[RMDB]
RNA sequence: GGGAACGACUCGAGUAGAGUCGAAAAUUAUCUGCCAUUAUCAGUCGAAGAUCGAACGUUUAACCAAUAAUGUUCUUCAGAAUAUUUUUAAGCUUUGUUAUGCCACAGUUUACAUGUUACAAUUAAAAUCGGUAAAUACAUUCGUGUAUUUACCGAUAAAAGAAACAACAACAACAAC
Reactivity to 2A3 in 0.01 (KOAc 150mM, MgCl2 10mM, bicine 150mM(pH8.5), 24C), signal-to-noise 6, nucleotides 027 to 126: u140u060a050u020c030u030g050c020c010a020u070u080a080u120c050a040g090u040c040g050a100a000g050a090u070c060g010a020a020c000g000u010u040u080a050a070c040c030a030a060u100a100a040u090g020u010u000c000u050u030c020a040g070a120a040u060a130u060u110u040u020u080a060a010g010c010u030u070u090g050u100u040a050u120g020c030c010a020c020a060g010u060u090u080a060c040a020u080g030u130u080a060c070a070a090u150u120a160a090a020
Reactivity to DMS in 0.01 (KOAc 150mM, MgCl2 10mM, bicine 150mM(pH8.5), 24C), signal-to-noise 6, nucleotides 027 to 126: u010u020a090u010c040u010g010c070c020a080u020u010a070u000c070a090g030u000c040g010a080a080g010a060u000c090g010a050a050c070g020u000u010u010a090a140c150c160a090a080u010a040a030u000g010u000u000c020u010u000c080a100g000a080a080u010a020u010u010u010u010u010a050a100g000c040u000u000u000g010u000u010a040u010g000c050c030a050c090a060g010u000u010u010a060c130a060u010g010u010u000a060c120a070a070u010u010a060a030a080